The data come from the RNA Mapping Database (RMDB), library M2RFOK. This 207-nucleotide RNA was probed chemically with DMS and 2A3. Reactivities are given for positions 27 through 156. For DMS the reverse transcriptase was MarathonRT. For DMS, 2,599 sequencing reads were counted. The reactions ran in a buffer of 150 mM KOAc, 10 mM MgCl2 and 150 mM bicine (pH 8.5), at 24 C.

[RMDB]
RNA sequence: GGGAACGACUCGAGUAGAGUCGAAAACCUCACUACAUUUUACUGUUCCUAAAGAAUUUGUGACAGGUACAGUAAAACGUAUUGCAAGGUCUAUCAGUUCCUAUAAACAGGUAAAUAACAAUAUAUGAAAAGCAAAGACUGUUCGCAGUCUUUGCAACACUUAAGUUAGCUUCGGCUAACUUAAGUGAAAAGAAACAACAACAACAAC
Reactivity to DMS in 0.01 (KOAc 150mM, MgCl2 10mM, bicine 150mM(pH8.5), 24C), signal-to-noise 2, nucleotides 027 to 156: c020c000u000c010a050c060u010a030c020a030u000u000u000u030a030c030u010g000u000u000c000c030u010a150a150a150g020a080a220u000u000u020g010u010g020a270c250a070g010g000u000a020c000a060g030u030a000a020a010a040c020g010u000a010u000u000g020c020a160a050g020g040u000c050u000a100u000c100a190g050u000u000c060c000u000a190u010a070a110a100c070a110g010g010u000a030a060a100u000a100a070c020a060a060u000a120u010a080u010g000a100a130a100a200g030c010a020a040a020g000a020c010u000g030u000u000c300g010c000a010g040u000c000u000u000u010g000c010a020a050
Reactivity to 2A3 in 0.01 (KOAc 150mM, MgCl2 10mM, bicine 150mM(pH8.5), 24C), signal-to-noise 7, nucleotides 027 to 156: c000c000u010c010a010c010u010a000c000a020u000u000u000u000a000c000u000g010u040u060c000c000u090a100a140a090g150a210a250u220u250u300g110u100g080a080c080a070g000g000u000a000c000a000g000u000a000a000a000a000c010g000u000a010u020u010g020c090a080a020g010g000u020c020u070a080u100c040a020g010u020u010c000c000u040a070u170a090a090a010c100a030g040g080u100a110a120a100u170a150a040c030a080a060u150a010u060a070u270g070a090a120a010a010g000c000a000a000a000g000a000c000u010g020u050u080c190g000c080a000g000u000c000u000u000u000g000c000a000a000

2A3 adducts were read by reverse transcription with SuperScript II with manganese.